Chemical mapping of a 177-nucleotide RNA with 2A3 and DMS. The DMS profile rests on 10,097 reads. It was measured as part of the RMDB library OK2TST. For 2A3 the reverse transcriptase was SuperScript II with manganese. DMS adducts were read by reverse transcription with MarathonRT.
[RMDB]
RNA sequence: GGGAACGACUCGAGUAGAGUCGAAAAUCGAUGCACCUCUGGCUGUAUUAGAAUUGCGAUUGGAUCCCUUGCUGCCCGAAUGGAGACUAACGAUCAAGCCGGACAAGACAUUACCAAUCAAAAGUCACGUAAUCAUCAUAUUCGUAUGAUGAUUACGAAAAGAAACAACAACAACAAC
Reactivity to 2A3 in 0.01 (KOAc 150mM, MgCl2 10mM, bicine 150mM(pH8.5), 24C), signal-to-noise 7, nucleotides 027 to 126: u050c020g020a010u040g020c030a020c020c030u060c080u130g040g020c030u030g040u070a090u060u140a120g170a210a090u100u090g040c030g050a050u010u050g040g020a070u050c020c000c000u010u060g000c020u050g010c020c010c000g070a080a070u100g050g020a080g020a060c030u090a130a030c040g030a020u060c020a030a020g030c020c010g010g010a020c030a040a040g030a000c010a020u050u090a050c020c010a020a010u060c030a050a080a020a000g130u100c050a010
Reactivity to DMS in 0.01 (KOAc 150mM, MgCl2 10mM, bicine 150mM(pH8.5), 24C), signal-to-noise 8, nucleotides 027 to 126: u000c060g010a090u000g010c050a080c050c040u000c090u000g010g010c110u000g010u010a050u000u000a100g020a090a100u000u010g010c100g010a080u000u000g010g010a140u000c040c020c020u010u000g000c050u000g010c030c020c010g010a080a070u010g010g010a140g010a090c050u020a060a090c130g000a090u000c040a060a090g010c050c020g010g000a050c080a060a070g010a090c040a050u000u000a100c040c040a050a060u010c120a040a070a070a090g000u010c100a180